[RMDB]
RNA sequence: GGGAACGACUCGAGUAGAGUCGAAAAGAUACCAAUGAGAAGACAGUCGGAGGACGCUGAGAUGUACCCGACCCCAUCCGCCACCCGCGAAGGUCCAGAUAGCUUUGUGGGCGCCAGGCUAGCGUCACAGCUGGUAUUUAUUCGUAAAUACCAGCUGAAAAGAAACAACAACAACAAC
Reactivity to 2A3 in 0.01 (KOAc 150mM, MgCl2 10mM, bicine 150mM(pH8.5), 24C), signal-to-noise 4, nucleotides 027 to 126: g080a040u190a080c020c010a010a110u190g020a070g040a160a050g050a030c040a050g030u040c020g030g050a060g080g030a030c020g000c040u070g060a090g020a150u040g040u110a060c010c020c000g020a040c000c000c020c000a040u040c020c020g010c020c010a020c010c010c020g020c010g030a020a010g040g020u040c030c010a060g050a200u120a060g070c000u040u050u060g040u070g000g020g010c040g020c010c020a020g050g020c000u030a010g010c000g040u040c040a010
Reactivity to DMS in 0.01 (KOAc 150mM, MgCl2 10mM, bicine 150mM(pH8.5), 24C), signal-to-noise 6, nucleotides 027 to 126: g010a150u000a140c030c020a090a100u010g010a120g010a100a070g010a100c090a080g010u000c040g010g000a130g000g000a060c050g010c020u010g010a100g010a080u000g010u010a110c050c020c010g000a140c030c040c020c030a070u000c070c030g000c070c030a100c040c010c030g020c050g010a040a050g000g010u010c060c100a100g010a080u010a080g010c030u000u000u000g030u000g010g020g000c210g000c050c070a060g010g010c090u000a060g010c040g010u000c040a210